[RMDB]
RNA sequence: GGGAACGACUCGAGUAGAGUCGAAAAGUUGCCACAGCAACUGGAGAUAUGCCAUUUCCAACUGUCGCAAAUAUGUUGCAAGAACGUUUAGGGACGGGCAAAGUUGCCUCUAUGGAUCAACUUGCAGUAGCGCGGUAAUAUUCGUAUUACCGCGCUAAAAAGAAACAACAACAACAAC
Reactivity to DMS in 0.01 (KOAc 150mM, MgCl2 10mM, bicine 150mM(pH8.5), 24C), signal-to-noise 2, nucleotides 027 to 126: g020u000u000g010c000c100a030c180a090g010c080a040a050c080u010g040g000a090g030a070u000a060u030g010c140c240a090u010u000u000c000c000a030a100c050u000g010u000c280g000c020a000a030a040u000a080u000g000u010u000g010c070a060a050g000a060a080c060g000u000u000u000a140g010g000g000a010c090g000g010g020c070a030a090a090g000u000u010g000c040c020u010c130u000a110u010g020g000a060u010c080a060a070c000u000u000g000c060a080g010
Reactivity to 2A3 in 0.01 (KOAc 150mM, MgCl2 10mM, bicine 150mM(pH8.5), 24C), signal-to-noise 1, nucleotides 027 to 126: g020u000u000g040c000c010a040c030a020g010c000a040a020c020u060g040g040a030g070a060u090a070u100g070c090c080a030u000u000u000c090c000a260a280c280u010g000u040c040g000c040a000a000a080u190a070u150g120u090u020g000c010a000a090g030a180a010c070g000u040u030u110a110g040g000g030a020c030g000g030g070c100a080a060a060g170u210u040g110c000c000u020c020u040a070u200g040g000a030u100c000a020a100c000u000u020g010c010a100g020

Background
This 177-nucleotide RNA was probed chemically with DMS and 2A3. Reactivities are given for positions 27 through 126. For 2A3 the reverse transcriptase was SuperScript II with manganese.